[RMDB]
RNA sequence: GGGAACGACUCGAGUAGAGUCGAAAAAUAAACGGCCAACGAUAUUUGAAAUGUUUGGCUUCAUUAAACCUGAACCAAUAAUGAUGAAGAACAUUGAUGUGAAUAAGCCGAUUAAUGCAAAUGGUAAAGUUGAAAUAGUUUUCGAACUAUUUCAACUAAAAGAAACAACAACAACAAC
Reactivity to 2A3 in 0.01 (KOAc 150mM, MgCl2 10mM, bicine 150mM(pH8.5), 24C), signal-to-noise 7, nucleotides 027 to 126: a000u170a020a100a010c020g020g010c020c020a080a040c080g090a040u050a140u170u190u230g080a040a070a040u040g070u030u020u080g070g000c000u020u000c010a010u020u070a040a070a040c040c070u080g100a060a060c030c060a050a090u100a080a030u050g030a010u070g040a050a030g030a040a000c000a010u020u090g040a050u130g130u030g080a090a080u090a150a010g000c020c010g060a050u090u200a060a040u170g090c060a080a050a060u090g050g050u190a170a140
Reactivity to DMS in 0.01 (KOAc 150mM, MgCl2 10mM, bicine 150mM(pH8.5), 24C), signal-to-noise 6, nucleotides 027 to 126: a060u020a030a040a120c050g010g000c000c080a100a140c280g000a070u020a040u000u010u020g000a100a040a010u010g000u000u000u020g010g000c040u000u000c010a020u000u000a010a070a100c120c070u020g020a080a130c250c190a060a130u000a010a010u010g000a010u000g000a050a050g000a000a000c010a000u000u000g010a150u010g020u000g000a060a030u010a140a210g000c010c000g000a090u010u010a050a050u020g010c160a050a070a100u020g010g010u010a040a070

Structure probing data (2A3 and DMS) for a 177-nucleotide construct. The RNA was probed in 150 mM KOAc, 10 mM MgCl2 and 150 mM bicine (pH 8.5) at 24 C. Reactivities are given for positions 27 through 126. For DMS the reverse transcriptase was MarathonRT. 2A3 adducts were read by reverse transcription with SuperScript II with manganese. For DMS, 13,782 sequencing reads were counted.